[RMDB]
RNA sequence: GGGAACGACUCGAGUAGAGUCGAAAAGAUGGGGCAGGUGGGAAUAUACCUCGCCCACCACUUGCUCCUGAUUGAGAGAUAGACGGCGAGGGUCCGAUCAUACGAUAUAUUCCUGCUCAGCGUAUGAUCGGUUAUGAUACUUAAGACGAGCAGGUUAAAAUAGUGCUCAUUUCGAUGAGCACUAUUUAAAAGAAACAACAACAACAAC
Reactivity to 2A3 in 0.01 (KOAc 150mM, MgCl2 10mM, bicine 150mM(pH8.5), 24C), signal-to-noise 2, nucleotides 027 to 156: g060a030u090g000g000g000g000c000a000g000g010u000g050g020g060a110a000u190a030u090a220c010c000u000c000g020c000c000c000a000c000c000a000c000u000u000g000c010u010c000c010u000g050a040u090u100g130a150g010a000g040a040u100a120g060a090c080g020g040c000g000a000g010g010g000u020c000c000g000a000u000c000a000u000a000c010g020a010u040a000u030a070u250u170c000c000u000g000c000u010c040a020g000c000g000u000a000u000g000a000u000c000g000g000u000u000a000u000g010a010u030a170c030u120u160a080a030g070a110c050g000a020g010c010a000g010g000u000u050a000
An RNA of 207 nucleotides, treated with 2A3 and read out base by base.
Source: RMDB library OK3TST, as collected in RNAgym.
The RNA was probed in 150 mM KOAc, 10 mM MgCl2 and 150 mM bicine (pH 8.5) at 24 C.